[RMDB]
RNA sequence: GGGAACGACUCGAGUAGAGUCGAAAAAGCGUAGCGGUACGCCGCUACGCAAGGCGCAUUUGAACUGUAUUGUACGCCUUGCAUAAAGCAAAAGUACUAAAAAAAUGUGCCGUUACGACGGCACGAAAAAACAUCCAUUGGUUCGCCAAUGGAUGAAGUAUAAUCUUUUCUUCGGAAAAGAUUAUACAAAAGAAACAACAACAACAAC
Reactivity to DMS in 0.01 (KOAc 150mM, MgCl2 10mM, bicine 150mM(pH8.5), 24C), signal-to-noise 1, nucleotides 027 to 156: a130g020c030g030u010a030g040c000g000g000u000a130c250g030c000c000g020c000u000a000c010g000c000a000a050g010g020c000g000c000a040u000u000u000g050a070a230c070u000g040u000a300u000u000g000u000a050c010g000c030c000u000u000g010c040a130u000a060a080a110g020c040a080a040a170a150g080u000a300c040u040a000a000a000a040a060a060a120u020g050u000g020c030c000g020u010u000a070c220g040a160c030g000g000c000a060c000g000a040a040a040a050a050a150c030a000u000c000c000a000u000u000g000g010u000u000c300g000c040c030a000a000u000g000g000a000u000g030a000a050
Reactivity to 2A3 in 0.01 (KOAc 150mM, MgCl2 10mM, bicine 150mM(pH8.5), 24C), signal-to-noise 6, nucleotides 027 to 156: a000g040c010g000u000a000g000c010g000g000u040a050c210g040c020c000g010c000u000a000c000g000c000a000a000g000g000c010g020c030a080u080u100u280g150a200a120c080u100g040u200a090u130u090g020u030a020c020g000c010c000u000u020g000c020a080u110a240a160a030g010c020a020a020a020a040g050u030a050c110u240a050a040a030a020a010a050a130u140g000u000g000c000c000g000u010u040a100c250g010a010c000g020g020c000a000c000g020a020a020a000a000a000a000c000a000u000c000c000a000u000u000g010g010u030u040c140g030c060c000a000a000u000g000g000a000u000g000a000a000
Overview: Structure probing data (DMS and 2A3) for a 207-nucleotide construct. The RNA was probed in 150 mM KOAc, 10 mM MgCl2 and 150 mM bicine (pH 8.5) at 24 C. The data come from the RNA Mapping Database (RMDB), library M2RFPK. The DMS profile rests on 1,941 reads. For DMS the reverse transcriptase was MarathonRT.